[RMDB]
RNA sequence: GGGAACGACUCGAGUAGAGUCGAAAACUGCUUAAGAAACUGUCGAAAACCAGUGUGAACUUACAAUGGGCUUAUCCAUUGCCUACAGCAGAAGUUAAGAUAUGGUGGAAGAUAGUGGGCUACUCUGUCCUACACAAAGAAUCUUAAGGAUUUUGAGAGGUUAGAGAAGUUUCGACUUCUCUAACCUAAAAGAAACAACAACAACAAC
Reactivity to DMS in 0.01 (KOAc 150mM, MgCl2 10mM, bicine 150mM(pH8.5), 24C), signal-to-noise 1, nucleotides 027 to 156: c000u020g030c000u000u010a110a110g030a300a130a090c000u030g030u000c030g010a090a080a130a070c180c010a060g030u000g010u000g030a110a040c040u010u000a050c010a010a050u000g030g010g000c220u030u000a080u010c020c000a010u010u000g020c010c040u000a080c040a060g000c040a060g030a090a130g050u000u000a030a100g000a100u000a090u000g000g010u000g000g010a140a120g000a050u000a060g030u010g000g000g000c050u000a100c070u000c030u000g010u000c000c000u020a100c030a080c040a030a030a090g020a090a090u000c030u000u020a030a140g030g000a120u000u000u000u010g000a210g000
Reactivity to 2A3 in 0.01 (KOAc 150mM, MgCl2 10mM, bicine 150mM(pH8.5), 24C), signal-to-noise 2, nucleotides 027 to 156: c010u010g020c010u030u060a030a020g030a030a100a010c020u030g010u060c090g020a000a010a010a030c010c010a020g030u020g020u040g240a090a060c040u040u070a060c070a030a070u060g000g020g010c050u100u110a050u190c050c050a100u050u070g000c000c020u070a080c080a050g020c030a030g050a120a000g030u030u110a110a010g010a080u080a050u160g010g040u000g010g000a060a040g000a010u050a020g040u080g000g030g010c020u100a130c040u040c070u140g060u100c000c030u030a020c040a010c010a010a110a000g080a010a110u000c000u030u030a080a010g040g020a080u040u070u120u050g100a220g000